Background: The record gives the reactivity of an RNA of 207 nucleotides to 2A3 and DMS. Conditions: 150 mM KOAc, 10 mM MgCl2 and 150 mM bicine (pH 8.5), 24 C. DMS adducts were read by reverse transcription with MarathonRT.
RNA sequence: GGGAACGACUCGAGUAGAGUCGAAAACCAAGCAGAUGCAACAAUGGGUGAUCAGCAGCGAAGUCCCUGUAGGCCGCCAGCCCACGGGAAACGUUCAGAGACUAUGUGGUGAUGGGCUUUGACCUCUGCGGUCUGAGCUUAAGAUAUAGUCCGACCCCUACCAAAUAAGGUUCGCCUUAUUUGGUAGAAAAGAAACAACAACAACAAC
Reactivity to 2A3 in 0.01 (KOAc 150mM, MgCl2 10mM, bicine 150mM(pH8.5), 24C), signal-to-noise 6, nucleotides 027 to 156: c010c000a020a020g070c060a030g060a150u170g040c060a100a040c030a140a150u110g000g020g020u090g030a120u120c070a030g100c020a010g020c020g040a110a020g050u030c020c000c020u090g040u060a050g020g000c030c030g090c090c050a020g000c000c000c000a020c040g000g000g000a030a050a020c030g030u080u040c050a040g070a000g010a100c010u010a020u050g030u040g010g110u090g080a100u170g020g020g000c020u000u000u010g000a010c010c020u110c200u300g080c130g000g000u010c010u010g000a000g010c000u010u020a040a010g030a000u060a000u020a040g010u010c010c020g060a060c000c000c000
Reactivity to DMS in 0.01 (KOAc 150mM, MgCl2 10mM, bicine 150mM(pH8.5), 24C), signal-to-noise 3, nucleotides 027 to 156: c030c050a130a230g020c060a150g030a100u000g000c050a040a130c030a060a090u000g040g030g050u010g000a080u000c060a100g020c040a090g000c020g020a100a090g020u000c020c000c000u000g030u000a040g000g060c020c010g040c190c090a170g000c000c000c010a040c020g020g030g000a110a080a090c030g000u000u010c050a120g010a140g000a040c020u000a020u000g030u000g000g000u010g020a160u010g000g000g010c000u010u000u010g010a030c010c030u000c110u000g010c080g020g000u000c000u010g010a020g020c000u000u010a030a080g020a100u000a030u000a020g010u000c030c010g000a160c010c040c020
Record summary
For DMS, 5,796 sequencing reads were counted. Values cover nucleotides 27 to 156.